[RMDB]
RNA sequence: GGGAACGACUCGAGUAGAGUCGAAAACAGUCAAUGUGAAGGCGGGCCAGACCAUCGCCGCAUUCUACCAGAGCACCGUCAUGAUCUUUGGCACGAUGGCUCGCUACAUCCACAGAGUUAGGGAAAAGAUAGUAGCGUCAUUCGUGACGCUACUAUCAAAAGAAACAACAACAACAAC
Reactivity to DMS in 0.01 (KOAc 150mM, MgCl2 10mM, bicine 150mM(pH8.5), 24C), signal-to-noise 3, nucleotides 027 to 126: c130a070g020u000c060a100a110u010g000u000g010a090a090g000g020c020g000g000g010c010c010a040g000a120c130c070a040u020c140g020c090c030g030c110a050u000u010c050u000a090c050c030a070g000a060g010c090a060c050c020g000u010c130a100u010g000a070u000c030u000u000u000g020g000c080a060c130g010a080u000g010g000c010u000c030g010c000u000a040c090a100u000c060c010a020c020a040g030a160g000u020u010a060g000g000g000a070a060a110a130
Reactivity to 2A3 in 0.01 (KOAc 150mM, MgCl2 10mM, bicine 150mM(pH8.5), 24C), signal-to-noise 2, nucleotides 027 to 126: c020a000g120u100c030a030a140u030g020u020g060a120a040g060g000c030g000g000g000c010c010a020g040a110c020c040a050u060c080g030c040c020g020c020a000u070u030c030u070a090c030c060a030g000a020g060c040a030c070c030g090u110c020a050u150g070a140u040c040u090u100u070g020g020c040a010c120g060a050u040g010g000c020u000c010g000c000u010a010c020a040u030c050c000a030c010a030g050a030g070u080u120a100g010g050g000a030a160a000a020